[RMDB]
RNA sequence: GGGAACGACUCGAGUAGAGUCGAAAAGCCAAGAAUUGAUGAUAGAACCGUAAUGCUCAACGGGUAACCGAAUUGAGCCAGUCCAAGACUCGCAAGGUUGAGGGUUGUUGUGGGAAAGUCGCACGUUAUAUAUCUCAUUCUUCGGAAUGAGAUAUAUAAAAGAAACAACAACAACAAC
Reactivity to DMS in 0.01 (KOAc 150mM, MgCl2 10mM, bicine 150mM(pH8.5), 24C), signal-to-noise 2, nucleotides 027 to 126: g000c010c000a130a050g000a100a110u010u000g020a090u010g000a080u000a090g010a180a110c050c050g050u000a120a150u000g020c000u000c020a000a100c020g000g010g020u010a130a140c040c010g000a120a060u000u000g000a010g020c050c230a130g000u030c050c010a030a230g000a080c050u000c040g000c200a080a150g010g010u000u010g010a300g000g010g020u010u010g000u000u000g020u000g000g010g010a120a180a070g000u020c070g020c100a160c180g010u000u000

This 177-nucleotide RNA was probed chemically with DMS.
Conditions: 150 mM KOAc, 10 mM MgCl2 and 150 mM bicine (pH 8.5), 24 C.
Source: RMDB library RFMREP, as collected in RNAgym.